[RMDB]
This 177-nucleotide RNA was probed chemically with 2A3 and DMS. It was measured as part of the RMDB library M2PK50. The reactions ran in a buffer of 150 mM KOAc, 10 mM MgCl2 and 150 mM bicine (pH 8.5), at 24 C.
RNA sequence: GGGAACGACUCGAGUAGAGUCGAAAAGCAACUCGGUUCGCCGAGUUGCAAAUAAAAUCACCGGUAAAUUCGAGGCGUAAAUUACCGCUGAACGCCUCGAUAAAAGUCUUCAGUUCGCUGAAGACAAGAAAUCAUAUUUCUUCGGAAAUAUGAUUUCAAAAGAAACAACAACAACAAC
Reactivity to 2A3 in 0.01 (KOAc 150mM, MgCl2 10mM, bicine 150mM(pH8.5), 24C), signal-to-noise 3, nucleotides 027 to 126: g000c010a010a010c000u000c000g030g020u070u090c170g040c060c000g020a000g000u010u000g000c000a000a000a000u010a000a010a010a030u090c070a080c180c020g030g130u120a070a110a140u070u010c000g000a000g000g010c000g010u010a020a090a100u150u110a080c000c060g000c080u050g050a040a010c000g000c000c010u000c000g000a000u010a000a020a000a020g010u000c000u000u000c010a010g060u010u080c130g050c080u000g010a000a010g000a000c000a000a010
Reactivity to DMS in 0.01 (KOAc 150mM, MgCl2 10mM, bicine 150mM(pH8.5), 24C), signal-to-noise 4, nucleotides 027 to 126: g010c010a010a010c000u000c010g010g010u010u020c210g030c010c000g010a010g020u000u000g010c010a020a030a030u000a050a050a090a090u010c070a140c020c020g010g000u020a060a100a170u000u000c010g000a010g000g010c000g000u000a050a120a120u020u000a050c060c080g010c120u010g000a120a030c000g010c000c010u000c010g000a010u000a040a080a090a120g000u000c000u000u000c000a000g010u000u010c220g010c000u000g010a000a010g000a000c000a050a060

For DMS, 4,036 sequencing reads were counted.